[RMDB]
RNA sequence: GGGAACGACUCGAGUAGAGUCGAAAAGAUAUGGACCGUAACAGGGAGCUCUCGUAUCGGAAACGAUACACGCGAGAGCAUCGAUCUGUUCACGGUCCUAAGUCAAAGCGCUUCUUCGGAAGCGCAAGAAAUCUAUGGGGUUCGCCCCAUAGAUUUCAAAAGAAACAACAACAACAAC
Reactivity to 2A3 in 0.01 (KOAc 150mM, MgCl2 10mM, bicine 150mM(pH8.5), 24C), signal-to-noise 2, nucleotides 027 to 126: g000a000u050a020u140g000g000a000c010c000g010u010a020a000c000a020g000g060g030a080g010c000u040c000u010c020g010u020a010u020c010g000g010a050a020a050c010g000a010u050a030c130a080c200g240c180g040a000g000a000g030c000a000u190c010g010a090u000c010u000g000u050u050c200a030c090g050g000u010c000c000u000a000a000g010u010c030a050a110a120g040c020g010c000u000u000c020u040u050c260g130g000a000a020g020c000g000c000a000a000
Reactivity to DMS in 0.01 (KOAc 150mM, MgCl2 10mM, bicine 150mM(pH8.5), 24C), signal-to-noise 2, nucleotides 027 to 126: g000a050u000a300u000g000g000a010c000c010g020u000a010a000c010a010g030g000g010a050g000c000u000c000u010c020g010u000a000u000c000g020g000a120a070a270c010g010a000u000a040c090a130c300g050c300g000a000g040a000g010c000a140u000c170g000a050u010c010u000g000u000u000c180a000c040g000g000u010c000c000u000a010a060g010u000c050a050a090a120g000c010g000c010u000u000c000u000u020c230g020g020a010a000g020c000g000c010a020a010
Chemical mapping of a 177-nucleotide RNA with 2A3 and DMS.
DMS adducts were read by reverse transcription with MarathonRT.
It was measured as part of the RMDB library TTRDES.